An RNA of 207 nucleotides, treated with DMS and 2A3 and read out base by base. The DMS profile rests on 2,090 reads. Reactivities are given for positions 27 through 156. 2A3 adducts were read by reverse transcription with SuperScript II with manganese. Conditions: 150 mM KOAc, 10 mM MgCl2 and 150 mM bicine (pH 8.5), 24 C. DMS adducts were read by reverse transcription with MarathonRT.

RNA sequence: GGGAACGACUCGAGUAGAGUCGAAAAUUGAAAACGAUUGGCGUCCUUAGUGAUCUUCCGCCAAUUGAUGGCGUGCCUCGCUGGAAAUUACUGGAGCGCAAAGAUUUUGUCCACAUCAUCAAAGAGCGUGAAAAGCUCAUGGCGACCAAACGCAAGCCAUCAGCUUAUCAUUCGUGAUAAGCUGAUGAAAAGAAACAACAACAACAAC
Reactivity to DMS in 0.01 (KOAc 150mM, MgCl2 10mM, bicine 150mM(pH8.5), 24C), signal-to-noise 2, nucleotides 027 to 156: u000u000g010a100a030a100a080c020g040a160u000u020g030g040c030g040u000c020c010u010u010a080g040u010g010a110u000c020u000u000c070c000g020c010c010a070a140u020u010g010a050u000g020g050c040g000u000g020c090c020u000c080g010c080u000g020g020a180a060a120u000u000a070c070u010g020g010a070g000c070g040c060a110a090a190g010a100u000u000u000u000g010u010c030c000a070c060a070u000c060a070u000c050a020a040a110g010a020g010c000g000u030g000a060a100a170a300g020c030u010c020a100u000g050g000c020g000a130c030c030a020a100a150c070g070c100a030a150g010c080
Reactivity to 2A3 in 0.01 (KOAc 150mM, MgCl2 10mM, bicine 150mM(pH8.5), 24C), signal-to-noise 4, nucleotides 027 to 156: u060u110g050a010a010a010a030c030g040a050u000u000g010g010c010g020u010c010c000u040u070a050g010u040g100a100u050c030u070u010c040c010g000c000c000a010a080u000u030g030a040u020g020g030c040g010u030g020c020c010u040c030g060c020u070g020g180a070a090a090u190u120a140c100u100g060g040a040g010c040g000c090a080a130a040g090a100u090u140u060u220g030u000c020c000a010c000a030u050c000a000u010c000a050a040a040g050a020g010c010g000u120g060a070a020a010a050g010c000u000c040a040u010g000g000c000g100a290c010c030a030a030a020c040g010c060a060a000g040c010